An RNA of 177 nucleotides, treated with 2A3 and DMS and read out base by base.
It was measured as part of the RMDB library OK2TST.
DMS adducts were read by reverse transcription with MarathonRT.
The RNA was probed in 150 mM KOAc, 10 mM MgCl2 and 150 mM bicine (pH 8.5) at 24 C.
RNA sequence: GGGAACGACUCGAGUAGAGUCGAAAAUUCGCCCAGCUGGUCACCGAGAGGUGCCCGGGUGCCCUGCAGAGGCUCUCGUUGACGCUCCAGGGCUUGACGCCAGACGAGUACAUGGAGUGCUACCAGGCCCGAGUAUAAUUUUCGAAUUAUACUCGGGAAAAGAAACAACAACAACAAC
Reactivity to 2A3 in 0.01 (KOAc 150mM, MgCl2 10mM, bicine 150mM(pH8.5), 24C), signal-to-noise 2, nucleotides 027 to 126: u070u030c050g030c020c010c000a030g100c040u040g000g020u050c000a010c010c020g040a040g010a030g130g010u010g010c000c000c000g000g000g010u020g010c010c000c010u080g110c100a080g070a150g200g000c030u010c000u020c030g060u040u090g020a030c020g010c000u000c000c010a040g000g040g000c000u010u030g010a020c020g020c030c020a050g020a120c030g020a010g000u040a060c010a030u030g040g020a030g000u030g020c030u040a020c010c000a020g040g050
Reactivity to DMS in 0.01 (KOAc 150mM, MgCl2 10mM, bicine 150mM(pH8.5), 24C), signal-to-noise 6, nucleotides 027 to 126: u020u010c140g020c000c000c020a150g010c050u000g000g000u000c010a010c010c000g000a260g000a210g000g010u000g000c070c060c010g010g010g010u000g000c030c010c020u010g010c220a110g010a150g010g010c030u000c020u000c080g010u000u010g000a080c040g000c020u000c010c000a040g000g010g010c010u000u000g000a090c080g000c100c110a070g000a120c040g000a030g000u000a070c030a150u000g000g000a040g010u000g000c060u000a060c020c030a070g000g010